Notes
Chemical mapping of a 177-nucleotide RNA with DMS and 2A3. The 2A3 profile rests on 690 reads. The reactions ran in a buffer of 150 mM KOAc, 10 mM MgCl2 and 150 mM bicine (pH 8.5), at 24 C. Source: RMDB library OK1LIB, as collected in RNAgym.

RNA sequence: GGGAACGACUCGAGUAGAGUCGAAAAGAGCGUCGAGAGACGAAGAGAAGUGCACCGAUCAGCAACGGAGAACGUAAUGGUGCACAAGAGUAAGUCAGUGUAACGUUCUCUGGGCACUGGAGGCAGACGCCUGGACUGAUUUCGAUCAGUCCAGGCGAAAAGAAACAACAACAACAAC
Reactivity to DMS in 0.01 (KOAc 150mM, MgCl2 10mM, bicine 150mM(pH8.5), 24C), signal-to-noise 1, nucleotides 027 to 126: g000a080g000c000g000u000c000g000a250g000a230g000a020c050g000a030a120g000a120g000a000a040g000u000g040c000a160c080c020g020a100u090c180a160g070c230a090a150c010g040g000a010g020a000a000c060g020u030a140a040u000g000g080u000g080c000a080c190a020a050g030a160g020u020a080a050g000u000c060a030g040u000g000u050a120a020c020g000u050u000c040u000c000u000g020g000g000c080a050c070u020g000g000a220g000g000c160a060g000a150
Reactivity to 2A3 in 0.01 (KOAc 150mM, MgCl2 10mM, bicine 150mM(pH8.5), 24C), signal-to-noise 1, nucleotides 027 to 126: g090a010g010c010g000u000c010g020a000g000a000g000a080c090g000a170a000g090a000g030a130a080g060u020g000c020a000c000c030g040a170u020c020a020g080c000a020a140c010g000g000a010g000a080a000c000g000u050a070a080u110g030g040u080g000c050a000c020a000a000g000a000g090u300a200a000g060u030c020a020g010u010g010u100a050a020c000g010u020u000c010u030c000u030g030g000g020c060a010c030u000g020g140a050g030g000c020a000g010a020